[RMDB]
RNA sequence: GGGAACGACUCGAGUAGAGUCGAAAAGUUUUACGCAUAAUUAAUCACCUCACUACAUUUUACUGUUCCUAAAGAAUUUGUGACAGGUACAGUAAAACGUAUUGCAAGGUUUAUCAGUUCCUAUAAACAACCUAGAAGAGUUCGCUCUUCUAGGUUGAAAAGAAACAACAACAACAAC
Reactivity to 2A3 in 0.01 (KOAc 150mM, MgCl2 10mM, bicine 150mM(pH8.5), 24C), signal-to-noise 7, nucleotides 027 to 126: g050u070u100u090u160a110c090g010c050a040u120a160a080u180u120a110a060u130c040a020c010c000u020c000a010c000u020a000c000a020u000u000u000u000a000c000u000g000u030u040c000c000u040a030a120a020g170a210a240u170u180u210g220u070g050a050c100a060g000g000u000a000c000a000g000u000a000a000a000a000c020g000u000a000u010u010g030c100a120a060g050g010u020u060u090a100u070c020a010g010u010u000c000c000u040a060u120a110a030a020
Reactivity to DMS in 0.01 (KOAc 150mM, MgCl2 10mM, bicine 150mM(pH8.5), 24C), signal-to-noise 4, nucleotides 027 to 126: g010u000u010u010u000a100c200g000c130a100u020a070a040u020u000a130a080u020c190a040c000c010u010c010a040c050u000a010c010a060u000u000u000u000a000c000u000g010u000u000c000c000u000a130a090a110g010a120a160u020u000u020g050u020g000a160c170a010g000g000u000a010c000a010g010u000a000a000a000a010c080g010u000a000u000u000g000c170a100a020g000g000u000u010u020a050u010c140a110g020u000u000c000c000u010a070u010a090a080a180
This 177-nucleotide RNA was probed chemically with 2A3 and DMS.
The data come from the RNA Mapping Database (RMDB), libraries RFM100 and RFMREP.